[RMDB]
RNA sequence: GGGAACGACUCGAGUAGAGUCGAAAAUUGGCGAAUGCCUGUGGAUCUAAAUUUGUUGCGGGUUCGAGACCCGUCAGAGCCCGGCUCUGUAGCUCAAUGGUAGAGCGGUGUAUUCACAUAAACUUGUAAAAGACACGUGCCUUCGGGCACGUGUCAACCUGUCAAAGUAGUUCGCUACUUUGACAGGAAAAGAAACAACAACAACAAC
Reactivity to DMS in 0.01 (KOAc 150mM, MgCl2 10mM, bicine 150mM(pH8.5), 24C), signal-to-noise 2, nucleotides 027 to 156: u000u000g010g000c000g000a110a080u000g010c030c030u000g050u000g000g000a110u000c020u010a030a140a170u000u010u010g000u000u010g030c040g000g060g000u000u000c040g050a300g000a020c000c000c040g050u030c030a050g010a120g050c020c140c100g060g000c040u000c030u000g010u010a080g000c000u000c010a050a090u010g030g040u000a110g000a020g110c000g000g030u010g050u010a020u000u000c070a030c000a150u000a050a110a110c080u000u010g000u020a070a060a160a150g010a020c010a020c000g000u000g010c000c000u000u010c300g030g000g030c000a000c000g000u010g000u000c010a000a010
Reactivity to 2A3 in 0.01 (KOAc 150mM, MgCl2 10mM, bicine 150mM(pH8.5), 24C), signal-to-noise 2, nucleotides 027 to 156: u030u020g050g010c130g060a280a150u210g000c040c030u010g000u000g000g000a010u000c010u100a030a100a190u220u210u100g020u020u060g020c030g000g000g000u010u010c020g060a020g030a080c010c000c000g000u020c000a000g000a000g020c050c250c160g090g000c020u000c030u040g000u030a010g030c000u000c020a040a050u070g260g020u200a030g010a000g000c080g020g030u040g030u040a050u000u020c030a000c010a030u130a030a110a060c050u040u150g070u150a000a200a030a000g020a000c020a000c030g000u010g000c000c020u030u080c180g010g000g000c080a010c000g010u000g000u000c000a000a010

This 207-nucleotide RNA was probed chemically with DMS and 2A3. DMS (dimethyl sulfate) methylates the pairing face of unpaired adenines and cytosines. For DMS the reverse transcriptase was MarathonRT. Conditions: 150 mM KOAc, 10 mM MgCl2 and 150 mM bicine (pH 8.5), 24 C. The 2A3 profile rests on 690 reads.